[RMDB]
RNA sequence: GGGAACGACUCGAGUAGAGUCGAAAAGAUAUGGACUAUCGGGAGAGGGAUACUCGGAAACGAGUACCUCGAAGAACGAGUAGUCCUAAGUCAAACCGCAUCCUCUGGUUCGCCAGAGGAUGCGGAAGUUAAGAAGUACCUUCGGGUACUUCUUAACAAAAGAAACAACAACAACAAC
Reactivity to DMS in 0.01 (KOAc 150mM, MgCl2 10mM, bicine 150mM(pH8.5), 24C), signal-to-noise 3, nucleotides 027 to 126: g000a030u000a210u010g000g000a010c010u010a010u020c010g000g000g020a220g010a170g030g010g000a080u000a000c000u000c000g010g000a040a030a100c000g020a020g000u000a010c010c000u000c000g010a060a120g000a190a170c010g000a050g010u010a010g010u000c000c000u000a010a040g000u000c030a110a120a160c000c000g000c000a010u000c000c000u000c010u000g000g000u000u010c250g020c000c000a010g000a000g000g000a000u000g000c000g000g000a010a010
Reactivity to 2A3 in 0.01 (KOAc 150mM, MgCl2 10mM, bicine 150mM(pH8.5), 24C), signal-to-noise 1, nucleotides 027 to 126: g000a000u030a010u120g000g000a010c000u000a020u030c010g020g020g020a160g030a020g030g040g050a160u060a060c010u010c010g010g000a040a030a000c000g010a020g000u000a030c000c000u010c030g040a070a000g020a000a000c000g020a010g160u040a010g000u030c000c010u010a050a010g030u000c030a060a030a110c010c000g010c000a000u010c020c010u000c000u030g040g060u100u120c300g090c100c020a000g000a000g000g000a010u010g000c000g000g000a000a000